[RMDB]
Background:
Structure probing data (2A3 and DMS) for a 207-nucleotide construct. The reactions ran in a buffer of 150 mM KOAc, 10 mM MgCl2 and 150 mM bicine (pH 8.5), at 24 C. The data come from the RNA Mapping Database (RMDB), library OK3TST. Values are in units of 0.01, from 0 to 300, in steps of 10.
RNA sequence: GGGAACGACUCGAGUAGAGUCGAAAACGAGUCCUCCAAUGGAUGAAGAUGAGCGUCGUGAAUACGAGCGCCUGAUUCGUCGUGAGCUUGAGCGCAAAGAGCGCCAGCAAGGAUUGGAGCUUAAGUAAUGGCAGGCGAUUGGCUGAAGAUUGAAGUCGACAUACCCUACAUUCGUGUAGGGUAUGUCAAAAGAAACAACAACAACAAC
Reactivity to 2A3 in 0.01 (KOAc 150mM, MgCl2 10mM, bicine 150mM(pH8.5), 24C), signal-to-noise 4, nucleotides 027 to 156: c020g010a000g050u040c020c040u000c000c020a030a040u120g090g010a000u040g010a000a020g090a120u070g020a040g000c000g000u010c000g020u080g150a130a070u300a190c000g020a080g070c000g000c030c010u070g020a070u020u010c000g000u030c050g030u090g120a050g000c000u110u120g000a050g030c010g010c020a150a250a110g080a080g000c000g000c020c020a020g000c010a020a110g050g040a030u020u040g000g000a020g020c020u140u100a110a030g030u040a070a100u040g000g020c020a000g020g020c050g120a140u110u070g020g010c030u070g040a040a020g020a070u050u130g070a070a030g060u130c080
Reactivity to DMS in 0.01 (KOAc 150mM, MgCl2 10mM, bicine 150mM(pH8.5), 24C), signal-to-noise 1, nucleotides 027 to 156: c040g000a280g010u000c010c000u000c010c000a140a090u000g010g010a090u010g000a080a030g010a280u010g010a040g120c020g000u040c020g000u010g000a220a120u000a130c040g030a120g000c020g060c010c010u000g000a250u000u000c030g000u010c000g000u020g010a180g020c030u000u000g020a150g010c040g000c010a010a070a150g030a130g020c030g020c000c020a080g020c060a100a140g030g010a100u000u020g060g000a060g000c010u010u000a080a150g030u010a060a070u010g020g000c000a090g010g000c090g000a080u000u000g020g010c020u000g000a040a070g000a140u000u000g000a040a130g000u010c030